[RMDB]
RNA sequence: GGGAACGACUCGAGUAGAGUCGAAAAUGGGCAUAGUGGCGCAUGCCUCUAAUCCCAGCUACUGGGGAGGCUGAGCCAGGAGGAUUGCUUGAACCCAGAAGGUGGAGGUUGCGGUGAGCAGAGGUCACCUUAUGAAUUAUUUCGAUAAUUCAUAAGGAAAAGAAACAACAACAACAAC
Reactivity to 2A3 in 0.01 (KOAc 150mM, MgCl2 10mM, bicine 150mM(pH8.5), 24C), signal-to-noise 6, nucleotides 027 to 126: u060g020g000g000c030a040u040a090g100u030g010g010c000g000c040a020u140g010c010c000u010c010u080a140a170u120c010c000c000a000g020c080u240a170c080u030g010g020g000g010a020g020g000c020u020g000a010g010c020c010a010g010g020a030g030g040a070u060u110g020c010u020u050g040a040a050c020c010c000a020g070a080a030g050g030u060g010g030a030g000g030u070u080g030c030g010g050u070g030a020g010c040a020g020a020g050g020u050c020a030
Reactivity to DMS in 0.01 (KOAc 150mM, MgCl2 10mM, bicine 150mM(pH8.5), 24C), signal-to-noise 9, nucleotides 027 to 126: u010g000g010g010c030a050u000a110g010u000g010g010c010g000c230a030u010g010c000c000u010c070u010a140a150u010c020c000c000a040g010c170u010a080c090u000g010g000g010g010a030g000g010c010u000g000a080g010c020c010a060g000g010a150g010g010a090u010u000g010c030u000u000g000a090a120c030c010c020a110g010a090a080g010g020u000g010g010a080g010g010u000u000g010c060g010g010u000g010a110g010c050a060g010a090g010g010u000c080a140